[RMDB]
RNA sequence: GGGAACGACUCGAGUAGAGUCGAAAAGCGAAAAAAGAAAGGUGUAAUACUUUCAAACAGUGGAAGUUAAAAUGCCAGGCGUGUAAGCCUCAGUGAAAUUGAGCAGCAUCACGUCACCACGACUUGUGGUCCAGCUGUUUAUUGCAAAGACUCCAUAAGUACUCAUUACUUUCGAGUAAUGAGUACUAAAAGAAACAACAACAACAAC
Reactivity to DMS in 0.01 (KOAc 150mM, MgCl2 10mM, bicine 150mM(pH8.5), 24C), signal-to-noise 3, nucleotides 027 to 156: g010c080g010a000a040a080a120a110a120g010a040a040a050g010g020u000g000u020a130a170u000a050c010u040u010u000c010a110a100a120c150a130g020u000g000g010a070a060g030u020u000a050a070a060a080u000g000c060c060a080g020g010c000g020u010g030u010a080a210g030c060c010u000c010a030g000u010g000a090a100a170u000u000g010a020g030c040a160g040c030a300u000c010a010c020g010u000c000a090c020c010a040c030g020a090c150u010u010g020u000g020g020u000c040c050a090g000c010u010g010u000u000u000a040u000u000g010c040a100a110a140g020a120c030u000c010c020a060u000a080
Reactivity to 2A3 in 0.01 (KOAc 150mM, MgCl2 10mM, bicine 150mM(pH8.5), 24C), signal-to-noise 7, nucleotides 027 to 156: g030c010g080a020a020a000a000a020a070g040a020a020a010g030g000u070g030u100a080a120u150a230c000u010u010u020c000a040a050a030c010a010g020u020g020g020a040a020g010u080u150a140a090a040a030u070g040c030c010a010g000g000c010g000u010g010u040a110a040g000c010c010u000c000a030g020u110g230a100a150a150u120u030g010a020g010c080a010g000c000a030u050c000a010c000g000u000c010a010c020c000a010c010g210a230c140u140u300g010u000g010g000u030c010c010a060g020c020u010g030u030u050u020a070u060u060g000c020a040a050a090g030a110c040u030c030c010a030u040a160
The record gives the reactivity of an RNA of 207 nucleotides to DMS and 2A3. For DMS the reverse transcriptase was MarathonRT. It was measured as part of the RMDB library OK3TST. 2A3 adducts were read by reverse transcription with SuperScript II with manganese. For 2A3, 5,894 sequencing reads were counted.